[RMDB]
Overview
The record gives the reactivity of an RNA of 177 nucleotides to 2A3 and DMS. For DMS, 948 sequencing reads were counted. 2A3 adducts were read by reverse transcription with SuperScript II with manganese. It was measured as part of the RMDB library OK2TST. Values cover nucleotides 27 to 126.

RNA sequence: GGGAACGACUCGAGUAGAGUCGAAAACUGGAUUGAAAAUCUCAGCAAAGACAAAUUGAUCCCAAGUCUGAAAGAGAGCCUGCAAAAAUUGCGUACCGAUUAUGUUGAUCUGACGCUAAUCCACUGGUACGUACUUUAGCUUCGGCUAAAGUACGUAAAAAGAAACAACAACAACAAC
Reactivity to 2A3 in 0.01 (KOAc 150mM, MgCl2 10mM, bicine 150mM(pH8.5), 24C), signal-to-noise 1, nucleotides 027 to 126: c020u010g020g080a090u080u270g130a120a170a130a230u000c030u000c020a000g010c090a090a000a070g080a020c030a010a220a060u190u120g090a100u050c000c000c000a000a030g020u020c000u020g090a070a110a010g000a020g040a010g010c000c120u100g030c040a000a030a060a080a300u150u080g040c030g020u000a160c070c040g040a050u000u120a150u250g120u020u160g020a050u010c040u070g050a000c030g000c070u040a000a060u010c070c000a040c070u090g130g030
Reactivity to DMS in 0.01 (KOAc 150mM, MgCl2 10mM, bicine 150mM(pH8.5), 24C), signal-to-noise 2, nucleotides 027 to 126: c050u000g030g020a070u000u010g020a120a040a140a080u000c010u010c030a050g000c110a120a100a010g010a050c050a070a040a100u010u000g000a070u000c020c010c010a090a100g010u000c020u010g000a060a090a140g010a150g000a080g000c090c050u000g040c080a030a040a050a070a070u000u000g020c000g000u000a040c040c030g010a020u020u060a090u000g010u010u010g020a070u000c020u010g040a070c050g000c030u000a060a080u000c020c110a090c110u010g010g010